An RNA of 177 nucleotides, treated with 2A3 and read out base by base. The 2A3 profile rests on 511 reads. The RNA was probed in 150 mM KOAc, 10 mM MgCl2 and 150 mM bicine (pH 8.5) at 24 C.
[RMDB]
RNA sequence: GGGAACGACUCGAGUAGAGUCGAAAACAGUAAAUUUUAACUCAUGAGUGAAUCUGCGAGUUAAAUUUUAACUCAGGGUGACGUGGACGAAUCUCGGACGUCUAUUUCUCGAUCCAACGGUGUAGAACGAAUGGAACGACUUCGGUCGUUCCAUUCGAAAAGAAACAACAACAACAAC
Reactivity to 2A3 in 0.01 (KOAc 150mM, MgCl2 10mM, bicine 150mM(pH8.5), 24C), signal-to-noise 1, nucleotides 027 to 126: c000a010g050u080a020a040a000u020u010u000u020a010a010c020u000c030a080u130g060a080g060u080g160a130a140u110c040u080g210c050g070a020g000u000u000a000a000a000u000u040u010u040a020a150c000u010c080a060g070g010g070u010g030a000c070g020u050g000g050a000c000g060a000a000u110c100u020c010g070g110a020c010g030u000c020u020a010u000u050u070c010u000c050g020a010u030c010c000a000a020c040g060g000u030g010u080a040g050a130a020